[RMDB]
Description:
The record gives the reactivity of an RNA of 177 nucleotides to DMS and 2A3. For 2A3 the reverse transcriptase was SuperScript II with manganese. The data come from the RNA Mapping Database (RMDB), library RFMREP. DMS adducts were read by reverse transcription with MarathonRT. Reactivities are given for positions 27 through 126. For 2A3, 2,287 sequencing reads were counted. The RNA was probed in 150 mM KOAc, 10 mM MgCl2 and 150 mM bicine (pH 8.5) at 24 C.

RNA sequence: GGGAACGACUCGAGUAGAGUCGAAAAGACCAAGGAGUCUAACAUCCACGCGAGUGUUCGGGUGUCAAACCCGUGCGCGCAGUGAAAGCGAACGGAGGUGGGAGCCCGCAAGGGUGCACCAUCGACCCAUGUUAAUCGUGUUCGCACGAUUAACAUGAAAAGAAACAACAACAACAAC
Reactivity to DMS in 0.01 (KOAc 150mM, MgCl2 10mM, bicine 150mM(pH8.5), 24C), signal-to-noise 4, nucleotides 027 to 126: g010a100c020c030a180a160g030g020a120g000u000c010u000a120a080c110a080u010c040c020a040c050g010c040g010a090g000u000g030u010u000c040g040g010g000u000g010u010c220a060a100a040c010c000c010g040u000g000c010g000c010g050c030a120g000u000g030a040a070a160g000c060g000a040a040c110g010g010a290g050g030u010g000g000g020a300g000c030c000c000g010c300a070a080g000g000g010u000g000c100a300c000c010a010u000c010g000a070c080c030
Reactivity to 2A3 in 0.01 (KOAc 150mM, MgCl2 10mM, bicine 150mM(pH8.5), 24C), signal-to-noise 2, nucleotides 027 to 126: g020a020c020c020a070a190g180g000a210g030u020c030u040a070a000c030a110u020c030c010a030c050g000c030g030a070g060u080g040u040u050c010g000g000g000u050g100u160c090a130a140a000c000c000c000g010u030g000c030g020c010g000c040a050g000u040g160a190a050a000g080c040g030a100a040c090g020g040a010g040g000u000g030g000g000a020g000c000c010c000g000c030a070a060g000g000g000u030g000c070a020c040c000a000u000c010g040a090c010c030